[RMDB]
RNA sequence: GGGAACGACUCGAGUAGAGUCGAAAAUCAACACUAGUUACAUAACCGUUAUAAGUCAUCUCAUCGGCAUAAGACAUAUAAUGUCGAUGACUAAUACCGUCGACUAAACCGCGUAAUUCAAUCAUGAUUUUGUGGCGUGCCGCUUCUACUCCAAACAGAUAGGUUGCGUUUUCGAACGCAACCUAUCAAAAGAAACAACAACAACAAC
Reactivity to 2A3 in 0.01 (KOAc 150mM, MgCl2 10mM, bicine 150mM(pH8.5), 24C), signal-to-noise 2, nucleotides 027 to 156: u030c020a000a080c020a020c150u100a030g060u040u090a070c040a110u160a120a050c020c030g120u070u080a170u030a110a000g030u030c010a070u000c030u000c040a040u030c000g010g000c000a010u040a090a100g160a150c120a080u250a080u100a200a000u030g000u000c000g000a000u000g000a030c010u030a040a040u040a080c060c070g060u110c030g060a000c040u110a000a170a000c030c000g000c040g070u110a030a050u090u090c100a050a070u050c030a060u080g020a050u070u120u110u100g080u040g030g010c050g050u060g040c000c030g020c000u000u020c010u020a060c010u050c070c000a000a150a120c060a060
This 207-nucleotide RNA was probed chemically with 2A3. Values cover nucleotides 27 to 156. The RNA was probed in 150 mM KOAc, 10 mM MgCl2 and 150 mM bicine (pH 8.5) at 24 C. The data come from the RNA Mapping Database (RMDB), library OK3TST.